[RMDB]
RNA sequence: GGGAACGACUCGAGUAGAGUCGAAAAGAUAUGGACUACCCACCUUAGAAUCCCGAAGAACAGCUUCGGAAACGAAGCUGGGAGGGAUUAUAAGAGGUCCUAAGUCAAAGGGAUCUUCGGAUCCCAACCAGUAAAACGAGUUCGCUCGUUUUACUGGAAAAGAAACAACAACAACAAC
Reactivity to 2A3 in 0.01 (KOAc 150mM, MgCl2 10mM, bicine 150mM(pH8.5), 24C), signal-to-noise 1, nucleotides 027 to 126: g020a030u110a110u190g000g020a010c000u140a260c000c020c010a020c040c030u060u000a030g030a080a020u010c030c000c020g110a300a080g000a010a010c000a000g000c000u020u020c010g000g040a060a010a030c010g010a020a010g000c030u020g040g020g000a040g000g010g000a000u000u000a020u000a000a010g030a000g040g000u000c050c000u080a280a040g140u140c070a030a080a090g000g000g000a020u010c000u020u170c300g120g000a000u000c010c000c000a000a000
Reactivity to DMS in 0.01 (KOAc 150mM, MgCl2 10mM, bicine 150mM(pH8.5), 24C), signal-to-noise 1, nucleotides 027 to 126: g030a120u020a150u000g000g030a000c000u020a140c010c050c030a300c170c000u000u000a000g000a000a040u010c000c030c000g010a180a120g040a120a250c040a010g000c010u020u020c000g010g000a040a120a110c000g010a000a040g000c000u000g020g040g020a070g010g000g030a010u000u000a000u000a020a010g010a120g030g000u010c020c000u020a060a110g010u000c070a140a100a070g000g020g000a000u000c000u020u000c190g000g040a000u000c000c010c000a020a010